[RMDB]
RNA sequence: GGGAACGACUCGAGUAGAGUCGAAAACAGUCAACGUGAAGGCGGGCCAGACCAUCGCCGCAUUCUACCAGAGCACCGUCAUGAUCUUUGGCACGAUGGCUCGCUACAUUCUGAGAGUUAGGGAAAAGCUACGAUGACUGUUCGCAGUCAUCGUAGCAAAAGAAACAACAACAACAAC
Reactivity to DMS in 0.01 (KOAc 150mM, MgCl2 10mM, bicine 150mM(pH8.5), 24C), signal-to-noise 1, nucleotides 027 to 126: c050a110g000u000c020a020a090c150g000u000g000a140a120g010g010c000g010g000g000c040c000a080g000a120c130c050a090u000c060g000c040c070g000c030a080u000u000c080u000a020c020c020a010g010a060g000c090a060c040c020g000u000c060a110u010g000a020u000c020u000u000u000g000g000c060a120c160g010a100u000g000g000c000u000c050g030c020u000a060c040a160u000u000c070u010g000a120g010a070g000u000u000a040g010g000g030a030a040a090a150
Reactivity to 2A3 in 0.01 (KOAc 150mM, MgCl2 10mM, bicine 150mM(pH8.5), 24C), signal-to-noise 1, nucleotides 027 to 126: c010a000g080u010c040a010a000c010g000u010g060a170a070g010g000c010g000g050g010c010c030a030g020a050c060c020a120u050c040g060c040c050g010c000a000u060u050c040u040a150c020c050a040g040a010g080c030a020c060c070g150u170c030a070u120g030a080u050c050u040u050u010g050g040c060a020c020g060a110u030g000g020c000u000c010g000c000u010a040c000a070u090u000c010u020g010a010g000a000g090u100u080a070g060g060g020a040a060a020a000